[RMDB]
RNA sequence: GGGAACGACUCGAGUAGAGUCGAAAACUAGAAAAGCAAAUGUAGGCAUAAGUAACGAUAAAGGGGGCGAGAAACCCCCUCGCCGUAAGACUAAGGUUUCCACAGCUAUGCUAAUCAGCUGUGGGUUUAUCGUUGAUAUUUUCGAAUAUCAACGAUAAAAAGAAACAACAACAACAAC
Reactivity to 2A3 in 0.01 (KOAc 150mM, MgCl2 10mM, bicine 150mM(pH8.5), 24C), signal-to-noise 9, nucleotides 027 to 126: c020u020a020g130a050a140a020a000g050c050a050a070a120u170g040u100a080g070g000c030a030u060a200a050g070u050a120a060c060g060a080u110a140a070a020g000g000g010g000g000c030g020a080g140a100a090a050c000c000c000c000c000u000c000g000c000c000g040u090a030a050g030a020c040u080a060a070g110g030u040u080u020c000c000a000c000a000g000c000u040a010u200g060c030u130a120a110u130c050a010g000c000u000g000u010g000g000g000u000u000
Reactivity to DMS in 0.01 (KOAc 150mM, MgCl2 10mM, bicine 150mM(pH8.5), 24C), signal-to-noise 8, nucleotides 027 to 126: c040u010a080g010a070a080a090a080g010c070a060a070a060u010g010u020a070g020g000c030a090u000a080a060g010u010a080a050c060g010a060u010a090a090a040g010g000g010g010g010c020g000a130g010a080a110a260c000c000c010c010c000u000c040g000c130c010g010u000a040a080g010a060c060u010a050a090g000g000u000u000u010c000c000a010c000a010g010c010u000a060u020g010c160u030a060a090u010c140a020g000c000u000g020u000g000g000g010u010u000
Overview:
The data come from the RNA Mapping Database (RMDB), libraries RFM100 and RFMREP. Chemical mapping of a 177-nucleotide RNA with 2A3 and DMS. The RNA was probed in 150 mM KOAc, 10 mM MgCl2 and 150 mM bicine (pH 8.5) at 24 C. For 2A3 the reverse transcriptase was SuperScript II with manganese. 2A3 is a SHAPE reagent: it acylates the 2'-hydroxyl of flexible nucleotides of all four kinds.